Chemical mapping of a 177-nucleotide RNA with 2A3 and DMS. The data come from the RNA Mapping Database (RMDB), libraries RFM100 and RFMREP. 2A3 adducts were read by reverse transcription with SuperScript II with manganese.
[RMDB]
RNA sequence: GGGAACGACUCGAGUAGAGUCGAAAAAACAUUGGCAAUGCCCUUUUCUCAUGCUUGGUUGCUGUCUGGUAUUAUUCGACAGCUUGUAAUAGUAUCCGUAUAUGCCUACCCUACGCAACUGGGCGUAGACUGCACACCUUUUCGAAGGUGUGCAGUCAAAAGAAACAACAACAACAAC
Reactivity to 2A3 in 0.01 (KOAc 150mM, MgCl2 10mM, bicine 150mM(pH8.5), 24C), signal-to-noise 3, nucleotides 027 to 126: a000a010c150a130u210u090g040g000c070a110a060u100g040c000c000c000u050u060u000u000c030u000c010a030u090g000c000u050u050g010g020u020u040g010c030u070g010u060c070u090g080g000u070a070u160u020a100u040u220c010g020a010c060a030g020c010u010u070g030u060a070a090u040a050g030u040a100u030c070c000g010u030a020u030a020u120g030c000c000u090a140c010c010c050u060a050c060g010c000a040a040c050u040g000g030g000c000g000u000a040
Reactivity to DMS in 0.01 (KOAc 150mM, MgCl2 10mM, bicine 150mM(pH8.5), 24C), signal-to-noise 2, nucleotides 027 to 126: a010a120c110a040u050u000g010g010c020a110a070u020g000c020c010c010u000u020u000u000c010u020c020a080u010g020c020u040u000g010g010u010u000g010c020u030g000u020c070u020g010g000u000a060u020u020a100u020u020c030g030a070c160a060g020c040u000u020g000u030a070a080u020a060g020u000a100u010c110c050g020u000a060u000a020u000g010c030c020u020a040c070c100c060u030a030c050g010c030a080a060c110u020g000g010g000c000g000u020a030